[RMDB]
RNA sequence: GGGAACGACUCGAGUAGAGUCGAAAACUGAAGUAAAUACAGAUUUUUCCAUGACCGAUAUUAGCAUGGGAGAUUUGCAUGCUAAUGCCUUGCUUUUUCUCAAUAUCCUUGUUCGCCAGGGAAUAAAGAUGCUAGGGUCAUUCGUGACCCUAGCAUCAAAAGAAACAACAACAACAAC
Reactivity to 2A3 in 0.01 (KOAc 150mM, MgCl2 10mM, bicine 150mM(pH8.5), 24C), signal-to-noise 1, nucleotides 027 to 126: c000u030g080a050a020g120u100a110a060a110u210a080c020a020g050a030u100u060u010u050u000c030c040a030u040g120a170c000c090g060a040u070a060u300u080a030g010c000a010u000g000g070g060a080g050a090u020u030u170g050c020a000u030g000c010u020a100a000u030g000c000c020u050u140g050c000u140u010u030u070u000c010u010c060a000a070u040a050u060c000c000u030u050g030u060u020c050g040c160c030a040g000g040g000a000a070u040a060a090a000